[RMDB]
RNA sequence: GGGAACGACUCGAGUAGAGUCGAAAAGUGGUCGAGUGCGAAGCACUGGGGUAGAGAAAUAAAUAGAUAGAGAACUACCCCGUCAGUCAGUCACUCUCUGUCUGAAUCUCUCUCUCAAAGACCACGAAAUACCACUGGCUUUCGAGCCAGUGGUAUUAAAAGAAACAACAACAACAAC
Reactivity to 2A3 in 0.01 (KOAc 150mM, MgCl2 10mM, bicine 150mM(pH8.5), 24C), signal-to-noise 3, nucleotides 027 to 126: g020u010g000g000u000c020g020a000g040u010g000c060g170a210a070g070c050a000c070u020g020g000g050g000u140a020g040a000g050a020a160a030u200a090a170a020u090a010g080a060u030a010g020a000g020a020a020c030u030a020c060c020c000c000g040u070c000a030g000u000c020a010g020u030c070a050c060u020c010u000c010u020g010u000c000u000g060a130a140u020c010u000c000u000c000u010c000u000c050a110a120a000g000a000c000c010a000c000g000a020
Reactivity to DMS in 0.01 (KOAc 150mM, MgCl2 10mM, bicine 150mM(pH8.5), 24C), signal-to-noise 3, nucleotides 027 to 126: g000u010g010g000u000c010g000a040g020u000g000c000g030a160a130g000c010a000c020u020g000g010g020g030u050a010g010a010g000a020a080a100u030a110a080a160u050a020g000a050u030a000g000a020g000a040a060c110u020a130c040c070c040c120g000u010c070a070g000u000c070a050g000u000c130a180c090u010c000u000c000u010g040u000c000u000g020a130a070u010c020u000c000u000c000u010c000u010c090a090a080a080g000a000c010c000a000c000g010a060